The data come from the RNA Mapping Database (RMDB), library 15KLIB.
The record gives the reactivity of an RNA of 170 nucleotides to 2A3 and DMS.
For 2A3, 9,131 sequencing reads were counted.
The reactions ran in a buffer of 150 mM KOAc, 10 mM MgCl2 and 150 mM bicine (pH 8.5), at 24 C.
Reactivities are given for positions 27 through 129.
RNA sequence: GGGAACGACUCGAGUAGAGUCGAAAACGUCCUUCCCUUUUCUUAUUAUUCCGAGGAUGUUUCCCAGCCAGGGAUUUUCGUCCUCGAGUUUCUUGAUGGUUCUCCUGCUCUUCCGGAGCCUUCUUUCGACCGGUGUGGUUCGCCACACCGAAAAGAAACAACAACAACAAC
Reactivity to 2A3 in 0.01 (KOAc 150mM, MgCl2 10mM, bicine 150mM(pH8.5), 24C), signal-to-noise 5, nucleotides 027 to 129: c040g100u080c030c000u010u030c000c030c000u030u070u080u000c080u070u150a300u070u070a110u160u030c050c000g010a010g020g000a010u020g010u040u010u000c000c000c010a020g150c100c110a030g030g000g000a010u090u050u050u160c000g000u010c000c000u000c000g000a020g000u030u040u010c040u040u080g070a120u100g070g000u100u030c010u020c040c010u070g100c000u000c000u070u030c010c000g010g010a010g020c010c000u020u010c000u000u030u040c010g060a060c000
Reactivity to DMS in 0.01 (KOAc 150mM, MgCl2 10mM, bicine 150mM(pH8.5), 24C), signal-to-noise 4, nucleotides 027 to 129: c220g020u030c030c080u030u000c030c030c020u000u010u010u000c080u060u050a100u050u050a070u040u040c160c040g000a020g040g040a030u010g010u000u000u050c030c020c010a190g080c180c240a160g050g010g000a040u000u000u000u000c000g020u000c020c040u020c010g020a000g030u000u000u020c050u040u050g010a180u050g020g010u040u020c010u040c020c040u040g050c080u080c030u050u020c040c070g050g010a070g000c120c020u000u000c060u020u040u000c010g040a090c160